[RMDB]
RNA sequence: GGGAACGACUCGAGUAGAGUCGAAAAUGUGGAUGCACCUAUAGCGUGCUUCAGGAAUGUCUUCAAAGUUGCUUAUGUCCCUUGAAAGAUGUUGAUAAUGUCUUAAGAGCUAGUUAGGCGUCAGGUAGGUUGUGGAGACUUUCGAGUCUCCACAACCAAAAGAAACAACAACAACAAC
Reactivity to DMS in 0.01 (KOAc 150mM, MgCl2 10mM, bicine 150mM(pH8.5), 24C), signal-to-noise 1, nucleotides 027 to 126: u000g010u010g040g000a080u010g020c060a060c010c040u000a120u010a060g010c100g030u000g010c020u000u000c020a120g010g020a110a050u010g020u000c010u000u010c030a070a100a150g020u010u020g000c000u000u000a170u010g000u000c020c030c000u000u020g020a080a030a020g000a030u000g010u020u000g020a130u000a080a030u000g010u000c010u000u000a090a140g020a110g020c030u000a060g020u010u000a080g020g050c040g020u020c050a040g060g000u000a110
The record gives the reactivity of an RNA of 177 nucleotides to DMS. Values cover nucleotides 27 to 126. It was measured as part of the RMDB library OK2TRN. For DMS, 831 sequencing reads were counted. For DMS the reverse transcriptase was MarathonRT.